[RMDB]
RNA sequence: GGGAACGACUCGAGUAGAGUCGAAAAUGGAAUCAGUUUCCCAUAUAUACCAAGGGAGAGCUGUAUUCGUCCCUGGUUUUAGUAGCAUUAACAGUGGUGCUGGUCCUGGGUUACUAGGGUUACUGUUAGACAUUGGAAAUUGUGAUACUGAUUAAAACGUGGUAAUGCUAUUCGUAGCAUUACCACGAAAAGAAACAACAACAACAAC
Reactivity to DMS in 0.01 (KOAc 150mM, MgCl2 10mM, bicine 150mM(pH8.5), 24C), signal-to-noise 2, nucleotides 027 to 156: u010g030g000a060a090u000c060a170g040u000u000u000c010c000c010a210u000a140u010a120u000a110c040c070a040a130g040g030g010a030g000a050g030c080u000g000u010a190u000u000c060g000u010c020c020c020u000g010g000u000u000u000u010a070g020u010a130g020c070a120u000u000a080a060c050a070g000u010g040g000u000g000c080u010g020g000u000c010c060u010g000g000g050u000u000a060c070u000a060g000g010g030u000u000a030c030u000g020u000u000a070g000a160c060a110u000u000g030g000a060a040a100u000u030g000u000g030a120u000a160c060u000g010a200u000u000a050a070a080a270
Reactivity to 2A3 in 0.01 (KOAc 150mM, MgCl2 10mM, bicine 150mM(pH8.5), 24C), signal-to-noise 2, nucleotides 027 to 156: u110g030g030a010a030u040c030a010g000u000u000u000c000c020c010a030u030a030u040a000u000a090c020c080a030a070g010g020g000a040g020a010g140c110u100g080u240a160u100u090c110g040u030c000c000c000u000g040g030u010u000u070u010a090g020u040a010g040c080a120u110u020a050a040c020a040g020u030g110g040u120g090c010u010g010g000u040c040c010u120g110g040g000u190u040a040c000u010a030g000g030g000u000u050a000c030u000g020u030u000a040g010a030c040a090u020u090g060g030a010a130a090u070u040g000u010g010a050u030a050c020u080g070a060u070u230a000a050a040a020

Structure probing data (DMS and 2A3) for a 207-nucleotide construct. The RNA was probed in 150 mM KOAc, 10 mM MgCl2 and 150 mM bicine (pH 8.5) at 24 C. High DMS reactivity at an A or C suggests that its Watson-Crick edge is free. For 2A3, 1,020 sequencing reads were counted.